[RMDB]
RNA sequence: GGGAACGACUCGAGUAGAGUCGAAAAAGAAAACUUACCCCUAAAUAUUCAAUGAGGAUUUGAUUCGACUCUUACCUUGGCGACAAGGUAAGAUAGAUGAAGAGAAUAUUUAGGGGUUGAAACGCAGGAGAAAGGAAGACUUCGGUCUUCCUUUCUCAAAAGAAACAACAACAACAAC
Reactivity to DMS in 0.01 (KOAc 150mM, MgCl2 10mM, bicine 150mM(pH8.5), 24C), signal-to-noise 2, nucleotides 027 to 126: a030g000a020a030a190a230c120u000u000a070c020c010c000c000u040a000a010a010u000a000u000u000c000a100a170u010g030a130g010g000a200u020u060u070g010a050u000u000c000g030a130c200u010c000u000u000a000c010c000u000u000g000g020c300g000a160c000a010a010g000g010u000a030a000g000a000u010a020g000a010u010g000a300a020g010a280g000a000a010u000a000u010u000u000a000g000g000g000g030u020u020g030a010a040a060c130g020c210a070g060
Reactivity to 2A3 in 0.01 (KOAc 150mM, MgCl2 10mM, bicine 150mM(pH8.5), 24C), signal-to-noise 1, nucleotides 027 to 126: a000g040a000a030a030a000c050u060u050a000c000c000c000c000u000a000a060a000u000a000u010u000c050a160a110u300g080a140g170g020a160u140u060u160g040a080u000u000c000g010a000c110u000c000u000u000a000c000c000u000u000g010g000c040g030a070c020a000a010g010g040u000a000a010g010a000u000a000g000a010u000g030a000a000g060a000g000a010a010u000a000u000u000u000a000g010g050g000g000u000u000g000a000a000a000c050g050c040a030g000